[RMDB]
RNA sequence: GGGAACGACUCGAGUAGAGUCGAAAAACAGACAUGUUACUGUAACACAGCACGGUGUCACAGCCAUGUUGUCCGUUCUGAGGUAGUUACGGUUAAUUGUCCACACGAGCACCACGCCUUGUCUCUUCUAUAAGCCGGCAAUUCCAAACAUUGUGUCGUUACUGCUGUAAUUCGUUACAGCAGUAACAAAAGAAACAACAACAACAAC
Reactivity to DMS in 0.01 (KOAc 150mM, MgCl2 10mM, bicine 150mM(pH8.5), 24C), signal-to-noise 2, nucleotides 027 to 156: a030c060a100g000a070c000a040u000g010u000u000a050c000u000g000u020a040a020c030a300c020a170g030c090a060c010g000g000u000g020u030c110a100c110a230g000c050c030a030u010g000u000u000g040u020c020c050g020u000u000c080u020g000a150g010g040u000a080g020u010u000a010c030g000g040u000u000a040a120u000u000g010u010c000c030a060c090a090c050g000a100g000c030a110c050c010a080c050g030c020c030u000u000g010u000c020u010c010u000u000c030u000a110u000a070a110g020c010c060g000g000c040a040a100u010u000c050c000a050a130a090c130a120u000u020g000u010g000u000c110
Reactivity to 2A3 in 0.01 (KOAc 150mM, MgCl2 10mM, bicine 150mM(pH8.5), 24C), signal-to-noise 6, nucleotides 027 to 156: a000c060a020g060a010c020a020u080g030u060u170a030c010u010g010u040a040a000c040a000c000a040g070c050a020c050g070g020u030g050u100c030a010c010a030g070c050c030a060u080g020u030u030g030u040c010c010g030u060u030c020u090g070a090g050g090u120a110g030u110u030a010c020g020g030u030u080a090a060u150u080g010u020c030c010a050c000a020c050g020a020g020c040a020c040c010a020c030g030c000c000u030u050g030u020c020u000c000u090u000c020u050a080u020a140a040g050c060c000g040g020c030a010a090u080u020c040c020a060a060a060c050a110u070u100g030u030g040u100c060